The record gives the reactivity of an RNA of 177 nucleotides to DMS and 2A3.
Values cover nucleotides 27 to 126.
RNA sequence: GGGAACGACUCGAGUAGAGUCGAAAAUAAAAGCGCGAAAAAGAUCGAUCGAUCGUUUGUACGCGCAAGUCUAAGUUUGAUACGGGCAUACUAGCUAGCUAGCUAGCAAAACAAACUUAGUAAAAAACAAUACAAAUGGGUUCGCCCAUUUGUAUUGAAAAGAAACAACAACAACAAC
Reactivity to DMS in 0.01 (KOAc 150mM, MgCl2 10mM, bicine 150mM(pH8.5), 24C), signal-to-noise 5, nucleotides 027 to 126: u010a070a070a100a160g010c000g030c010g010a050a040a040a090a040g000a000u000c000g010a130u010c190g000a010u000c000g010u000u000u000g010u010a150c010g010c000g010c000a070a050g020u000c010u000a000a000g000u010u000u000g010a090u010a110c220g000g000g010c180a180u000a110c010u000a010g000c010u000a190g020c170u000a070g020c010u000a020g020c030a040a060a070a100c000a000a010a010c000u000u000a000g000u000a000a040a060a060a050a070
Reactivity to 2A3 in 0.01 (KOAc 150mM, MgCl2 10mM, bicine 150mM(pH8.5), 24C), signal-to-noise 3, nucleotides 027 to 126: u130a010a080a020a020g000c010g010c000g060a060a050a000a030a010g020a010u020c050g050a130u140c130g000a010u010c030g090u030u090u090g090u050a030c000g000c010g000c000a000a000g020u000c000u010a000a000g010u010u020u010g090a100u140a140c090g050g050g010c070a050u050a130c010u010a010g000c000u000a040g150c040u060a000g000c000u020a000g040c050a000a050a030a050c000a000a000a000c000u000u020a000g040u080a080a040a000a000a010a040
Conditions: 150 mM KOAc, 10 mM MgCl2 and 150 mM bicine (pH 8.5), 24 C. 2A3 adducts were read by reverse transcription with SuperScript II with manganese.